[RMDB]
RNA sequence: GGGAACGACUCGAGUAGAGUCGAAAAGAUAUGGAAGACAUAGAGCGAUAAGUCCCGAUCGGAAACGAUCGAGGACUUUUGACGCUCGAAUGUCUUCCUAAGUCAAAGCACCCCUUCGGGGGUGCAACAUACCGAGAUGCUUCGGCAUCUCGGUAUGAAAAGAAACAACAACAACAAC
Reactivity to DMS in 0.01 (KOAc 150mM, MgCl2 10mM, bicine 150mM(pH8.5), 24C), signal-to-noise 2, nucleotides 027 to 126: g010a030u000a300u010g000g010a000a010g060a030c000a020u000a190g010a010g000c000g010a090u010a030a030g000u000c000c010c000g020a000u000c010g010g000a140a080a200c000g030a010u010c000g030a110g030g010a000c000u000u010u010u000g020a210c090g010c000u010c000g020a090a080u000g000u010c010u000u000c000c000u010a000a050g010u010c030a090a140a260g010c000a000c000c000c000c000u000u010c250g020g000g030g000g040u010g020c010a020a060